[RMDB]
RNA sequence: GGGAACGACUCGAGUAGAGUCGAAAAAAUACCUAGCCGCUUAAUUGGCGGCUCGCAUGAAGGUUCAACGAGAGUCCCACUGUCCCCACAUUCAGCCCCGUGAAAUUAAUGUACUGGUGCACAAUCCAGGUUUAGCUGAAUUCGUUCAGCUAAACCUAAAAGAAACAACAACAACAAC
Reactivity to DMS in 0.01 (KOAc 150mM, MgCl2 10mM, bicine 150mM(pH8.5), 24C), signal-to-noise 2, nucleotides 027 to 126: a080a050u030a100c050c020u040a060g010c020c000g020c000u000u030a120a160u050u050g000g000c030g020g010c010u000c080g080c100a070u010g010a070a110g010g000u000u030c060a050a080c040g020a050g000a170g010u010c000c000c030a060c060u010g000u030c040c010c000c020a070c090a050u000u020c040a170g010c030c010c000c040g020u020g030a020a000a120u030u020a030a070u040g020u020a030c110u000g020g050u000g000c080a060c100a100a070u040c030c080
Reactivity to 2A3 in 0.01 (KOAc 150mM, MgCl2 10mM, bicine 150mM(pH8.5), 24C), signal-to-noise 5, nucleotides 027 to 126: a000a000u210a040c020c000u010a010g000c010c000g030c020u110u150a210a060u190u300g020g000c000g000g000c000u000c010g080c010a080u140g080a080a010g070g010u080u080c040a050a010c060g020a030g000a030g150u040c020c000c010a030c050u020g060u050c000c010c020c000a020c020a040u080u060c050a020g020c010c010c010c000g020u040g030a040a040a070u170u150a060a080u100g030u060a050c000u030g060g000u060g030c020a020c050a040a040u030c030c020